[RMDB]
RNA sequence: GGGAACGACUCGAGUAGAGUCGAAAAGCGGGUGUCGACAUCUAGACCAUGCCCUUAGCUCCACGAGUAGGAAUGUCUGAAAGUGCAUUCUGAAUGGGUGAUAAGAUUCAUCCAAGGCUAAAUAUAAAACAUUGUGUACCUUCGGGUACACAAUGUUAAAAGAAACAACAACAACAAC
Reactivity to 2A3 in 0.01 (KOAc 150mM, MgCl2 10mM, bicine 150mM(pH8.5), 24C), signal-to-noise 6, nucleotides 027 to 126: g010c020g000g040g000u110g040u060c030g030a130c030a140u040c040u080a040g070a090c020c010a040u100g010c020c030c000u030u050a020g000c010u050c040c070a050c090g040a030g020u000a000g030g000a010a010u010g040u040c060u080g110a180a120a020g150u110g030c010a010u000u000c000u020g040a100a050u040g010g000g000u010g020a010u040a090a150g110a120u120u000c000a000u000c000c000a020a020g050g000c030u020a000a070a050u210a050u070a050a170
Reactivity to DMS in 0.01 (KOAc 150mM, MgCl2 10mM, bicine 150mM(pH8.5), 24C), signal-to-noise 3, nucleotides 027 to 126: g020c030g000g000g020u000g020u010c100g000a120c090a080u020c080u010a140g020a070c050c060a110u040g000c010c010c020u010u000a010g000c020u000c060c050a100c300g020a060g020u000a140g000g000a010a010u000g000u010c090u010g020a090a130a110g000u010g030c000a000u000u010c000u000g020a120a090u000g000g030g030u020g000a000u020a140a110g010a130u010u000c000a010u000c010c010a130a120g000g000c050u000a020a040a060u030a080u020a040a070